Description:
The data come from the RNA Mapping Database (RMDB), library TTRINS. The record gives the reactivity of an RNA of 177 nucleotides to DMS. For DMS, 3,747 sequencing reads were counted.
[RMDB]
RNA sequence: GGGAACGACUCGAGUAGAGUCGAAAAGAUAUGGAUGUACCCUUCGCAUAGGAGGUAUAGGGCAGAUCGGAAACGAUCUGCCCUAUACUACCCACCCUAUGAACUACGAAGGGUACAUCCUAAGUCAGAUGUAUUAUGGGUUCGCCCAUAAUACAUCAAAAGAAACAACAACAACAAC
Reactivity to DMS in 0.01 (KOAc 150mM, MgCl2 10mM, bicine 150mM(pH8.5), 24C), signal-to-noise 4, nucleotides 027 to 126: g010a060u010a300u000g000g020a010u000g010u000a020c000c000c010u000u000c010g020c000a010u010a020g010g010a150g010g000u000a000u000a000g010g000g010c000a010g010a010u000c000g010g000a170a100a300c000g030a010u010c000u000g000c000c000c000u010a000u000a000c010u000a040c090c050c120a300c130c010c000u000a010u000g000a070a140c170u040a300c040g000a020a010g010g010g000u010a000c000a000u000c000c000u010a000a100g000u010c060a150